[RMDB]
RNA sequence: GGGAACGACUCGAGUAGAGUCGAAAACCGUAGGAGCAAUAUUAGCAGCAACAGCGUACCGUAACAUCUAUCCUUCGAAAGAGGGAUAGUGGGUACGACAUGCUGAAAAAAUUUGCUCCUAAACGGAAAGGGAAUUUGGCUUCGGCCAAAUUCCCAACUUUGUAGGCAAGUUCGCUUGCCUACAAAGAAAAGAAACAACAACAACAAC
Reactivity to 2A3 in 0.01 (KOAc 150mM, MgCl2 10mM, bicine 150mM(pH8.5), 24C), signal-to-noise 1, nucleotides 027 to 156: c020c000g000u030a020g030g000a010g020c020a020a070u060a040u300u070a080g090c030a030g000c000a010a080c060a140g080c000g020u000a000c000c010g110u070a060a030c010a040u080c010u010a010u020c020c010u030u000c020g110a230a100a100g000a030g000g000g000a000u000a010g000u000g020g040g020u000a000c000g060a060c030a020u050g000c000u000g090a070a000a020a020a050a070u030u000u040g000c000u050c020c000u000a010a010a010c010g070g090a070a110a210g000g000g010a010a000u020u000u000g020g000c030u060u080c300g000g000c000c010a000a010a000u020u010c000c000c000a000a000